Structure probing data (DMS and 2A3) for a 207-nucleotide construct. For DMS, 4,224 sequencing reads were counted. For 2A3 the reverse transcriptase was SuperScript II with manganese. Reactivities are given for positions 27 through 156. For DMS the reverse transcriptase was MarathonRT.
[RMDB]
RNA sequence: GGGAACGACUCGAGUAGAGUCGAAAAAGUUCGCGCUUCCGUGAAACGCGAAAAUCGGACGGUGGCUGCAAGUCGCAUCGCAAAACCGCGGCAAGUGGAGUUAGCGAGAGGAGGCUGGGUGUUGGCUAGAACACACGGUACUUCGGUACCGUGUGAAACAGUCAUUAAUCUUCGGAUUAAUGACUGUAAAAGAAACAACAACAACAAC
Reactivity to DMS in 0.01 (KOAc 150mM, MgCl2 10mM, bicine 150mM(pH8.5), 24C), signal-to-noise 2, nucleotides 027 to 156: a130g040u000u000c030g000c000g010c010u000u010c040c190g000u010g010a040a060a010c020g000c030g000a020a000a090a080u010c070g010g030a120c020g020g040u000g020g020c010u000g000c060a030a100g030u000c050g040c050a120u000c050g030c070a050a030a100a120c050c040g010c050g020g030c050a080a140g020u000g010g000a190g000u010u000a110g010c060g010a030g000a110g010g000a050g030g030c030u000g020g000g010u010g000u000u000g020g010c080u000a110g010a100a160c020a020c000a030c010g000g000u000a000c010u000u000c250g030g030u000a000c000c000g020u010g000u000g000a040a050
Reactivity to 2A3 in 0.01 (KOAc 150mM, MgCl2 10mM, bicine 150mM(pH8.5), 24C), signal-to-noise 2, nucleotides 027 to 156: a000g060u030u060c030g010c000g000c100u100u020c050c050g060u060g130a060a100a040c020g010c020g000a070a020a030a050u110c040g030g030a030c030g030g020u070g000g040c070u090g000c050a040a050g020u020c000g000c070a090u030c010g020c050a060a060a020a040c060c030g040c050g070g000c120a080a080g030u040g010g050a090g020u040u080a010g020c040g020a030g000a020g070g020a020g060g000c070u020g030g020g000u030g020u120u030g020g000c000u030a080g070a160a010c010a000c000a000c000g010g000u010a000c000u000u100c180g040g000u000a000c000c000g000u000g000u000g000a000a000